[RMDB]
RNA sequence: GGGAACGACUCGAGUAGAGUCGAAAACUCACGUUCGCGCUCGCGGUGGCGGUCGGCCUCACGCCCGAGAUGCUGCCGAUGAUCGUCAGCGCGAACCUCGCGCGCGGCGCGAUCGCGAUGGCGCGGAGAGCAGUACGGAUUUCGAUCCGUACUGCUCAAAAGAAACAACAACAACAAC
Reactivity to 2A3 in 0.01 (KOAc 150mM, MgCl2 10mM, bicine 150mM(pH8.5), 24C), signal-to-noise 2, nucleotides 027 to 126: c010u020c030a070c070g040u050u050c000g010c010g000c020u010c030g050c020g060g000u030g050g040c040g000g040u090c000g010g000c020c020u060c030a030c110g130c000c040c010g020a030g000a110u100g030c010u010g000c000c020g050a110u120g100a100u170c030g040u040c050a020g020c000g000c000g010a000a010c000c000u050c010g060c000g000c010g000c010g050g030c030g000c030g120a250u120c050g000c000g050a100u100g050g010c000g000c000g000g020a110
Reactivity to DMS in 0.01 (KOAc 150mM, MgCl2 10mM, bicine 150mM(pH8.5), 24C), signal-to-noise 2, nucleotides 027 to 126: c020u000c020a180c180g000u000u000c000g000c000g010c020u000c190g020c010g010g010u000g000g010c010g020g000u000c020g020g000c030c070u000c140a080c140g000c150c040c050g040a060g010a060u000g000c050u000g000c010c000g010a110u010g000a040u000c000g000u000c180a080g030c000g010c030g010a040a090c080c100u030c040g010c070g010c010g010c040g000g030c030g010c020g000a020u010c100g000c040g000a060u000g010g010c000g010c000g000g000a190